This 177-nucleotide RNA was probed chemically with DMS and 2A3.
[RMDB]
RNA sequence: GGGAACGACUCGAGUAGAGUCGAAAACGGAGGAGCGCUUCAGGGAUCCCCGGGGAAACCUGGAGCGAACUGGCAAAAAAGGACGGUGGGGAGUGCCCAGCGGCCGACAGGAAUAAUUCCCGCCGAACCAUAUAUAAUUGUUCGCAAUUAUAUAUGGAAAAGAAACAACAACAACAAC
Reactivity to DMS in 0.01 (KOAc 150mM, MgCl2 10mM, bicine 150mM(pH8.5), 24C), signal-to-noise 3, nucleotides 027 to 126: c060g010g000a290g000g010a090g010c020g020c000u000u000c020a020g010g000g000a300u000c010c000c060c270g020g000g010g010a010a080a300c000c000u000g020g000a020g020c000g010a020a040c020u010g000g020c090a000a040a080a120a080a100g000g020a060c000g010g020u000g000g000g000g010a160g010u010g000c010c000c000a070g000c030g000g010c010c030g000a060c150a070g000g020a080a070u000a060a160u000u000c000c000c000g030c060c040g030a080a210
Reactivity to 2A3 in 0.01 (KOAc 150mM, MgCl2 10mM, bicine 150mM(pH8.5), 24C), signal-to-noise 2, nucleotides 027 to 126: c030g020g010a080g020g040a050g090c010g000c000u020u000c000a000g020g030g000a030u040c020c020c030c040g300g050g000g000a040a020a000c000c000u000g010g000a000g030c000g000a000a000c010u000g000g000c040a050a020a030a050a070a120g060g020a030c070g050g030u040g020g040g000g030a230g110u130g060c000c020c000a060g040c020g010g070c040c030g010a020c030a000g010g090a010a050u140a130a100u060u000c000c000c020g000c020c010g020a000a030